[RMDB]
RNA sequence: GGGAACGACUCGAGUAGAGUCGAAAAGCGAGUGUGCAUUUAGCUGAGAUAAGCAGCGGUAUGUAUUGCUGCAGAUCUUGCAUCUGUACUUGUCCGGCUCGCAGGCCACUCCUAGAUCUAUCACGUACCAUACUCGUCCAUUCGUGGACGAGUAUGGAAAAGAAACAACAACAACAAC
Reactivity to DMS in 0.01 (KOAc 150mM, MgCl2 10mM, bicine 150mM(pH8.5), 24C), signal-to-noise 1, nucleotides 027 to 126: g040c080g010a010g000u000g010u030g020c000a000u020u000u050a110g000c000u040g000a090g000a020u000a040a020g030c000a010g020c000g000g000u020a090u030g020u050a020u040u050g010c000u000g000c000a000g020a020u000c010u090u000g010c000a000u010c030u000g040u000a020c020u020u020g000u000c060c010g010g010c010u000c010g000c070a180g000g030c130c030a070c050u010c050c010u010a040g010a030u040c060u010a040u030c060a110c160g010u000a190
Reactivity to 2A3 in 0.01 (KOAc 150mM, MgCl2 10mM, bicine 150mM(pH8.5), 24C), signal-to-noise 8, nucleotides 027 to 126: g080c080g010a010g020u110g040u090g030c040a050u060u080u120a090g000c100u130g040a020g010a110u030a050a020g020c060a020g050c020g000g040u170a160u230g200u050a060u120u260g030c020u030g000c010a010g020a100u040c040u060u100g010c010a020u000c010u020g010u020a030c000u070u120g060u050c030c010g020g000c010u010c020g010c020a020g050g040c020c010a040c030u020c000c010u060a050g020a150u030c030u110a080u130c070a010c170g050u050a080